[RMDB]
RNA sequence: GGGAACGACUCGAGUAGAGUCGAAAAUGAUUGAGCGUAGCACACACUCAGACUGUUCGACAGUCUGACACACACCUACGCUAGUGCAUCGUGUGUGUGAUAUCGAUGUAGCACGAAAAUGAAGUAAAGACGCCAGUCUAUUCGUAGACUGGCGUCUAAAAGAAACAACAACAACAAC
Reactivity to 2A3 in 0.01 (KOAc 150mM, MgCl2 10mM, bicine 150mM(pH8.5), 24C), signal-to-noise 1, nucleotides 027 to 126: u280g050a120u120u090g080a080g080c000g010u000a000g000c060a010c000a000c000a000c060u030c000a000g010a000c000u030g050u130u300c130g210a060c020a000g000u000c010u000g000a010c000a000c000a000c000a000c010c010u020a030c000g000c030u020a040g030u010g020c020a030u000c030g010u000g000u000g000u000g020u030g090a080u000a030u190c070g050a070u020g000u060a040g050c070a070c060g090a070a000a020a090u160g050a090a050g080u110a140a070
Reactivity to DMS in 0.01 (KOAc 150mM, MgCl2 10mM, bicine 150mM(pH8.5), 24C), signal-to-noise 2, nucleotides 027 to 126: u020g010a200u000u000g010a130g000c000g000u000a050g050c030a040c090a050c030a120c200u000c010a030g000a010c000u000g010u000u000c170g000a140c030a020g000u010c000u010g000a010c110a020c140a090c200a110c180c040u000a020c010g020c040u010a050g020u000g040c030a080u000c020g010u000g000u010g020u000g000u000g010a090u000a110u000c030g000a090u000g000u000a040g020c040a020c070g010a050a040a060a110u000g000a100a060g030u000a060a060